[RMDB]
RNA sequence: GGGAACGACUCGAGUAGAGUCGAAAAUCAUAGCUUCACCAGCGCGACCUGGUCCUCCACGAGCUGGCCCGCGGCCGCGAGCUCAGCUUUUACCUUGCCGCCCACCUCCUCGCGCAGGUACACCGAAGCGCAGUAUAUGCUUCGGCAUAUACUGCGCAAAAGAAACAACAACAACAAC
Reactivity to DMS in 0.01 (KOAc 150mM, MgCl2 10mM, bicine 150mM(pH8.5), 24C), signal-to-noise 1, nucleotides 027 to 126: u010c080a070u000a080g030c050u020u010c100a080c060c020a020g060c100g000c050g000a130c110c060u000g030g000u010c040c010u000c040c000a140c230g000a040g030c020u000g010g010c020c010c030g010c030g020g050c190c140g000c030g010a030g000c000u000c040a020g020c010u000u000u000u000a080c070c050u010u000g040c030c000g010c020c010c010a080c030c020u000c030c050u000c100g010c010g000c010a010g010g020u010a060c190a110c040c040g000a100a100